Background: Chemical mapping of a 177-nucleotide RNA with 2A3 and DMS. The 2A3 profile rests on 3,055 reads. The reactions ran in a buffer of 150 mM KOAc, 10 mM MgCl2 and 150 mM bicine (pH 8.5), at 24 C. As a SHAPE reagent, 2A3 marks flexible, mostly unpaired nucleotides at the ribose 2'-OH.

[RMDB]
RNA sequence: GGGAACGACUCGAGUAGAGUCGAAAAGAUAUGGAAUUACGCUUCGACGAAGUUAAGCACUCUCGGAAACGAGUUGCUUAACAGAGAAGGUAAUUCCUAAGUCAAAACACGAACUUCGGUUCGUGAAUCCUAGCGUUACGUUCGCGUAACGCUAGGAAAAAGAAACAACAACAACAAC
Reactivity to 2A3 in 0.01 (KOAc 150mM, MgCl2 10mM, bicine 150mM(pH8.5), 24C), signal-to-noise 2, nucleotides 027 to 126: g000a000u030a020u130g030g020a010a020u000u020a080c180g060c300u010u030c010g300a300c110g190a300a300g010u000u000a010a000g000c000a030c040u100c000u000c010g030g010a060a040a030c010g000a010g000u010u000g000c000u000u000a000a000c000a000g000a000g010a010a010g000g000u000a000a010u010u000c000c000u020a060a000g040u000c000a120a000a070a090c010a000c000g000a010a000c000u080u080c240g150g000u000u000c000g030u000g020a010a060
Reactivity to DMS in 0.01 (KOAc 150mM, MgCl2 10mM, bicine 150mM(pH8.5), 24C), signal-to-noise 2, nucleotides 027 to 126: g010a030u000a300u010g010g000a010a000u000u000a010c010g020c010u000u000c010g000a170c250g000a180a120g000u000u000a000a000g010c000a040c300u000c020u000c010g000g000a170a080a170c010g050a020g010u000u010g000c020u000u000a020a010c000a040g010a020g000a010a000g010g000u000a030a000u000u000c000c000u010a020a090g020u000c030a100a090a080a190c010a000c010g030a020a010c000u000u010c210g030g000u000u000c000g010u000g000a040a060
It was measured as part of the RMDB library TTRDEL. The DMS profile rests on 1,604 reads.